This 177-nucleotide RNA was probed chemically with 2A3 and DMS. For 2A3, 38,878 sequencing reads were counted. The RNA was probed in 150 mM KOAc, 10 mM MgCl2 and 150 mM bicine (pH 8.5) at 24 C. 2A3 adducts were read by reverse transcription with SuperScript II with manganese.
RNA sequence: GGGAACGACUCGAGUAGAGUCGAAAAGAUAUGGAUUGGUGAUAGACAUGAAUGGUCCUCGGAAACGAGGAUGAUAUUCAACAGCUAUACCAAUCCUAAGUCAAAUCCAUCUGUUCGCAGAUGGAAACUUAAGAUAAUUGUUCGCAAUUAUCUUAAGAAAAGAAACAACAACAACAAC
Reactivity to 2A3 in 0.01 (KOAc 150mM, MgCl2 10mM, bicine 150mM(pH8.5), 24C), signal-to-noise 9, nucleotides 027 to 126: g010a000u020a010u060g020g000a000u000u010g040g010u150g200a060u020a020g050a040c290a300u300g010a020a000u050g220g000u000c000c000u000c010g010g010a040a010a010c010g000a000g000g000a000u010g010a010u020a010u030u010c010a090a100c110a240g000c000u010a000u000a020c000c000a000a000u000c000c000u000a010a000g010u000c030a070a000a210u010c000c000a000u000c010u020g110u080u100c300g020c170a000g000a020u010g000g000a040a030a010
Reactivity to DMS in 0.01 (KOAc 150mM, MgCl2 10mM, bicine 150mM(pH8.5), 24C), signal-to-noise 9, nucleotides 027 to 126: g010a010u000a100u010g000g000a010u000u000g000g010u000g010a030u000a010g010a060c120a190u010g010a020a010u000g000g010u000c000c000u000c000g020g000a030a030a060c000g010a010g000g010a000u000g010a090u010a030u000u000c000a100a110c210a190g010c000u000a010u000a030c000c000a010a000u000c000c000u000a000a070g000u000c010a120a130a180u000c000c000a010u000c000u000g000u010u010c270g030c010a010g000a010u000g000g010a010a020a070